[RMDB]
RNA sequence: GGGAACGACUCGAGUAGAGUCGAAAAACACGUACGUGUUCUCGUGAACACGAACGAGAGUGAGAGUGAACGAGUUCACACGAACGUGUUCACGAGAUCGAACACGAGUUCGAACACUCGUUCUCGUACUCUCGAGAGAACGUGUUCGAGAGAUCGACCGAGGACAGUUAUUCGUAACUGUCCUCGGAAAAGAAACAACAACAACAAC
Reactivity to 2A3 in 0.01 (KOAc 150mM, MgCl2 10mM, bicine 150mM(pH8.5), 24C), signal-to-noise 2, nucleotides 027 to 156: a020c100a010c060g110u300a040c100g050u060g000u080u000c010u020c010g030u000g010a010a010c000a010c010g010a030a020c000g000a050g000a020g040u040g060a140g010a020g060u070g050a020a050c110g020a160g090u050u030c020a000c010a000c020g010a040a010c000g000u000g000u000u000c000a000c020g020a020g000a040u060c020g020a100a010c030a020c010g020a040g060u040u030c010g000a010a010c030a000c040u090c130g000u000u010c000u000c000g030u030a020c000u000c000u010c020g160a200g030a000g000a060a000c010g010u000g000u010u020c030g010a000g000a000g010a060u030c010g000a020

The record gives the reactivity of an RNA of 207 nucleotides to 2A3. Reactivities are given for positions 27 through 156. The reactions ran in a buffer of 150 mM KOAc, 10 mM MgCl2 and 150 mM bicine (pH 8.5), at 24 C. For 2A3 the reverse transcriptase was SuperScript II with manganese. The data come from the RNA Mapping Database (RMDB), library OK3TST.